RNA sequence: GGGAACGACUCGAGUAGAGUCGAAAAUGGUGAGGUAGAGGUUGCGAGAUGCACUAGUAAUUUUUUCGAGGCGAAACAAAGACGCCGACGACAAAGAAUGAACAGGUUGAUCGCCGAAGUGACUAUUAGCUGAUGUAAAGUUCGCUUUACAUCAGCUAAAAGAAACAACAACAACAAC
Reactivity to DMS in 0.01 (KOAc 150mM, MgCl2 10mM, bicine 150mM(pH8.5), 24C), signal-to-noise 2, nucleotides 027 to 126: u020g030g020u010g010a010g000g000u010a000g000a070g000g040u000u020g010c020g080a030g000a200u000g000c020a070c080u020a180g010u090a070a010u000u000u000u000u000u000c030g010a070g020g010c000g040a030a070a010c300a000a150a160g000a120c050g080c030c010g020a070c170g000a060c300a030a010a070g050a050a050u000g010a220a070c280a300g030g010u000u000g000a120u000c090g000c040c110g020a040a120g000u040g000a160c080u000a080u000u000
Reactivity to 2A3 in 0.01 (KOAc 150mM, MgCl2 10mM, bicine 150mM(pH8.5), 24C), signal-to-noise 2, nucleotides 027 to 126: u140g020g000u110g020a080g000g020u090a020g010a050g060g060u120u080g020c000g000a030g010a010u010g000c010a020c030u000a000g010u010a010a050u000u010u000u000u000u050c010g030a020g010g000c000g030a060a090a050c160a080a210a020g140a010c000g020c010c000g020a060c020g010a040c050a010a020a000g010a010a020u050g010a060a000c000a010g010g010u050u060g040a030u020c010g000c010c040g020a080a000g010u010g020a040c020u070a080u090u020